[RMDB]
Source: RMDB library M2RFPK, as collected in RNAgym. This 207-nucleotide RNA was probed chemically with 2A3. The 2A3 profile rests on 885 reads. For 2A3 the reverse transcriptase was SuperScript II with manganese. The RNA was probed in 150 mM KOAc, 10 mM MgCl2 and 150 mM bicine (pH 8.5) at 24 C.

RNA sequence: GGGAACGACUCGAGUAGAGUCGAAAAAGCGUAGCGGUACGCCGCUACGCAAGGCGCAUUUGAACUGUAUUGUACGCCUUGCAUAAAGCAAAAGUACUAAAAAAACGUGCCGUUACGACGGUACGAAAAAACAUCCAUUGGUUCGCCAAUGGAUGAAGUUCUCGUACGUGUUCGCACGUACGAGAACAAAAGAAACAACAACAACAAC
Reactivity to 2A3 in 0.01 (KOAc 150mM, MgCl2 10mM, bicine 150mM(pH8.5), 24C), signal-to-noise 2, nucleotides 027 to 156: a000g040c000g010u010a000g010c000g000g010u010a030c280g000c010c000g000c030u000a000c000g000c000a000a000g000g000c000g000c040a060u030u090u230g080a180a050c030u140g050u190a040u140u120g000u000a010c000g000c000c000u000u010g020c030a050u150a230a120a080g030c010a000a110a000a000g110u030a030c150u280a020a040a000a010a000a000a060c000g000u000g000c020c000g000u010u010a060c250g040a030c000g120g000u000a000c020g050a080a000a000a000a000a000c010a010u000c000c000a000u000u010g000g030u040u040c230g040c020c000a000a000u020g000g000a000u000g000a000a000